[RMDB]
RNA sequence: GGGAACGACUCGAGUAGAGUCGAAAAGCUGAGCGAUUGCCGAACACUGGGGAGAAAACGGCAGCGGAUCAUCACUGGUGAAGGGGGCCUGUUGACGUUGGGCGUUACUGGCGACAAACAACAUCGGAUUAAAUCGGUCCUUCGGGACCGAUUUAAUAAAAGAAACAACAACAACAAC
Reactivity to DMS in 0.01 (KOAc 150mM, MgCl2 10mM, bicine 150mM(pH8.5), 24C), signal-to-noise 2, nucleotides 027 to 126: g000c050u000g010a070g030c000g000a180u020u010g050c020c010g010a020a150c140a220c060u010g000g070g010g000a070g000a040a040a110a130c060g000g000c020a110g000c110g020g000a140u020c110a070u020c020a040c030u030g010g020u010g000a100a070g000g000g000g000g000c000c020u040g050u000u000g000a020c220g000u020u000g020g000g000c150g000u000u010a100c050u000g000g000c010g000a100c090a060a180a130c100a020a100c110a020u040c060g000g010
Reactivity to 2A3 in 0.01 (KOAc 150mM, MgCl2 10mM, bicine 150mM(pH8.5), 24C), signal-to-noise 2, nucleotides 027 to 126: g050c050u070g010a020g040c100g170a250u040u090g030c060c020g000a050a020c030a030c060u050g050g010g040g000a030g130a050a170a000a000c050g030g040c040a020g030c010g020g070a130u020c030a000u040c010a040c090u070g010g000u050g090a040a120g020g060g000g010g000c000c010u070g000u100u040g030a040c010g040u060u050g010g020g060c020g020u000u050a050c030u000g030g000c030g030a010c050a010a130a000c060a050a030c010a020u180c050g060g030
Chemical mapping of a 177-nucleotide RNA with DMS and 2A3.
Values cover nucleotides 27 to 126.
The data come from the RNA Mapping Database (RMDB), library OK1LIB.
2A3 adducts were read by reverse transcription with SuperScript II with manganese.
For DMS the reverse transcriptase was MarathonRT.
The DMS profile rests on 1,741 reads.